[RMDB]
RNA sequence: GGGAACGACUCGAGUAGAGUCGAAAAGUGGCACUCAAUGUCGCGGCACUGGGUAGUGCGACUCGCCUGAUCGGCGCGGUAGGUGACGACGACAGUGCGGAAGAAUUGCAGUCCCGCCUGAAUGCGGAAAUCGUGCCUUAUUCGUAAGGCACGAUUUAAAAGAAACAACAACAACAAC
Reactivity to 2A3 in 0.01 (KOAc 150mM, MgCl2 10mM, bicine 150mM(pH8.5), 24C), signal-to-noise 3, nucleotides 027 to 126: g100u110g040g000c050a020c040u050c010a000a090u130g030u080c030g010c050g300g000c030a010c040u070g000g070g130u170a070g040u050g080c000g020a030c000u020c040g030c000c030u160g060a260u140c050g050g000c000g010c030g060g000u080a050g070g100u080g080a020c010g000a000c000g000a030c010a030g040u040g050c020g000g000a110a000g030a060a080u080u080g000c000a000g010u070c000c020c000g020c000c020u160g110a150a040u220g050c050g050g000
Reactivity to DMS in 0.01 (KOAc 150mM, MgCl2 10mM, bicine 150mM(pH8.5), 24C), signal-to-noise 4, nucleotides 027 to 126: g020u000g030g020c050a040c030u000c090a060a110u000g020u000c020g020c070g010g020c020a040c020u000g010g010g010u000a060g020u000g010c020g000a060c070u000c010g010c010c010u010g020a150u010c190g020g000c030g020c120g010g000u010a060g010g000u000g000a110c000g010a080c060g000a120c030a000g010u010g010c010g000g000a120a100g000a080a080u000u010g010c150a090g000u010c060c010c030g000c030c060u000g010a080a110u010g010c070g010g000

This 177-nucleotide RNA was probed chemically with 2A3 and DMS. It was measured as part of the RMDB library OK2TST. The DMS profile rests on 5,378 reads. The RNA was probed in 150 mM KOAc, 10 mM MgCl2 and 150 mM bicine (pH 8.5) at 24 C. Values are in units of 0.01, from 0 to 300, in steps of 10. Values cover nucleotides 27 to 126.